[RMDB]
RNA sequence: GGGAACGACUCGAGUAGAGUCGAAAAGUAGUUACGAGGCGUAGUAUUAUGAAGUGUGUGUAAAGAGCAUACUGAAGUACUGGAGGGCAAGUCUGGUGCCAGCAGCCGCGGUAAUACCAGCUCCAGUCUAUAAUCUACCGUUCGCGGUAGAUUAUAGAAAAGAAACAACAACAACAAC
Reactivity to 2A3 in 0.01 (KOAc 150mM, MgCl2 10mM, bicine 150mM(pH8.5), 24C), signal-to-noise 2, nucleotides 027 to 126: g010u050a000g000u020u070a010c030g020a030g030g000c060g010u050a000g010u030a090u190u020a080u280g160a130a040g010u010g000u000g000u000g000u060a020a060a030g050a030g030c000a000u030a030c020u020g030a080a000g010u020a030c030u010g010g050a100g000g030g060c040a030a010g010u030c040u020g010g060u030g040c000c020a020g020c010a020g020c030c030g030c030g000g000u010a060a080u020a100c000c000a030g020c020u010c020c000a010g020u000
Reactivity to DMS in 0.01 (KOAc 150mM, MgCl2 10mM, bicine 150mM(pH8.5), 24C), signal-to-noise 3, nucleotides 027 to 126: g010u000a040g020u000u000a070c030g030a050g000g020c040g020u010a040g020u000a030u000u000a060u020g000a140a020g010u000g030u020g000u010g000u010a090a090a200g030a260g010c000a010u000a020c020u000g010a120a110g000u000a000c050u000g000g000a130g000g010g020c050a030a110g000u010c050u000g000g000u000g010c040c020a100g010c070a110g010c070c060g000c060g010g020u000a030a040u000a130c020c020a080g000c080u000c020c020a070g000u000

An RNA of 177 nucleotides, treated with 2A3 and DMS and read out base by base. For DMS, 2,725 sequencing reads were counted. It was measured as part of the RMDB library RFMREP. Values cover nucleotides 27 to 126.